[RMDB]
RNA sequence: GGGAACGACUCGAGUAGAGUCGAAAACUGAAUCAAACAAGAGCAAUAUUGAGCUUAAAGCAAAUAAAGCUGAAAGUGAAGCCAAAAAUGCAAUGGCAAAGGCUACCGAAGCACAAGCGAACAGUUUACCACUUAAUAGCAAUGCAGUUAGUGCAAGCCGCCUGCUGGUAUUCGUACCAGCAGGCGGAAAAGAAACAACAACAACAAC
Reactivity to 2A3 in 0.01 (KOAc 150mM, MgCl2 10mM, bicine 150mM(pH8.5), 24C), signal-to-noise 1, nucleotides 027 to 156: c020u000g010a010a050u000c010a100a000a060c020a060a040g050a010g090c020a110a000u030a090u110u190g040a000g030c070u100u090a040a010a020g000c030a070a070a160u070a060a020a000g000c070u040g030a030a030a010g040u150g060a000a000g000c010c010a000a070a040a000a040u100g020c000a070a050u030g030g020c000a010a010a010g000g000c000u040a010c130c150g030a040a000g000c000a000c010a040a000g010c000g010a020a030c010a010g010u040u120u090a180c120c090a030c020u010u100a020a060u020a070g020c000a040a000u090g000c040a000g000u060u300a080g050u070g030c040a010a010g020
Record summary
Chemical mapping of a 207-nucleotide RNA with 2A3. Reactivities are given for positions 27 through 156. For 2A3 the reverse transcriptase was SuperScript II with manganese. Conditions: 150 mM KOAc, 10 mM MgCl2 and 150 mM bicine (pH 8.5), 24 C.